Structure probing data (DMS and 2A3) for a 207-nucleotide construct. For 2A3 the reverse transcriptase was SuperScript II with manganese. The RNA was probed in 150 mM KOAc, 10 mM MgCl2 and 150 mM bicine (pH 8.5) at 24 C.

RNA sequence: GGGAACGACUCGAGUAGAGUCGAAAAAGAUCCAUGCUACGGCGUGGAUCACACGUUCAUCCCUAUUGGGACGGAAGUAGGCAUAGUGCCGAAGGAACGCAUUAGUCAUGCGCUACGGCGCAUGACACACAUCAGAGUCACUUCGGUGACUCUGAAACUUGAUAUUGUAGUUCGCUACAAUAUCAAGAAAAGAAACAACAACAACAAC
Reactivity to DMS in 0.01 (KOAc 150mM, MgCl2 10mM, bicine 150mM(pH8.5), 24C), signal-to-noise 3, nucleotides 027 to 156: a120g000a000u000c020c010a030u010g010c000u000a080c220g080g020c000g020u000g000g000a010u000c010a030c120a030c040g010u000u000c010a210u000c000c000c000u010a160u000u000g020g000g010a020c020g000g000a060a080g010u000a150g000g020c030a170u010a120g030u000g020c010c020g020a100a130g020g000a110a060c060g000c030a120u010u000a130g020u010c060a010u000g010c040g000c010u010a070c210g080g020c030g000c000a000u000g010a010c000a030c070a030c120a130u000c010a010g010a030g000u000c000a010c010u010u010c300g060g040u000g000a020c000u000c010u010g010a000a030a030
Reactivity to 2A3 in 0.01 (KOAc 150mM, MgCl2 10mM, bicine 150mM(pH8.5), 24C), signal-to-noise 9, nucleotides 027 to 156: a000g000a000u000c000c000a000u010g000c000u020a040c260g150g000c010g000u000g010g000a000u000c000a000c000a000c000g010u010u010c010a020u040c000c000c010u140a300u160u300g000g000g010a010c010g030g020a020a020g010u010a010g020g000c040a100u150a240g170u190g180c000c000g000a000a000g010g010a010a010c020g000c050a060u070u180a040g000u000c000a000u010g000c010g000c010u020a040c270g090g000c000g000c000a000u000g000a000c000a000c000a000c000a070u030c000a000g000a000g000u010c000a000c010u040u090c210g090g000u000g000a000c000u000c000u000g000a000a000a000
For DMS, 6,837 sequencing reads were counted. Reactivities are given for positions 27 through 156.